RNA sequence: GGGAACGACUCGAGUAGAGUCGAAAAAAGCGUGUCGACAACGCGUUCACGCACAUAACGCUUCUCUGUGAUGAUAUGCUAUCCGGCGAGAAGGAGAUGAUCCACAAUCUGAAGGUCAGCAUUCGCACGGCGGAUAUAAUUUCGAUUAUAUCCGCCGAAAAGAAACAACAACAACAAC
Reactivity to DMS in 0.01 (KOAc 150mM, MgCl2 10mM, bicine 150mM(pH8.5), 24C), signal-to-noise 3, nucleotides 027 to 126: a070a040g010c020g040u000g020u010c140g000a140c180a090a110c170g010c040g000u000u000c090a080c070g000c020a100c130a090u020a110a050c090g040c030u000u000c010u000c010u010g020u000g010a060u000g010a080u000a030u000g000c000u000a090u000c010c020g000g040c270g030a030g000a080a120g020g010a040g000a110u000g000a110u000c000c000a060c120a080a190u000c030u000g010a230a120g000g000u000c120a020g010c010a050u000u010c040g000c070a140
Reactivity to 2A3 in 0.01 (KOAc 150mM, MgCl2 10mM, bicine 150mM(pH8.5), 24C), signal-to-noise 2, nucleotides 027 to 126: a010a000g010c020g000u010g030u030c030g080a160c050a190a030c080g040c010g100u030u040c050a060c000g020c060a050c010a130u200a130a070c090g000c070u050u000c030u000c000u000g040u020g010a170u040g030a020u030a000u220g010c020u020a010u020c000c010g000g000c010g020a010g000a040a070g050g000a020g000a060u260g030a030u010c010c000a010c060a100a080u070c030u170g130a010a000g000g020u060c060a000g000c000a020u000u010c010g000c010a030
Notes:
This 177-nucleotide RNA was probed chemically with DMS and 2A3. Values cover nucleotides 27 to 126. For DMS, 1,804 sequencing reads were counted. The reactions ran in a buffer of 150 mM KOAc, 10 mM MgCl2 and 150 mM bicine (pH 8.5), at 24 C. It was measured as part of the RMDB library OK2TST.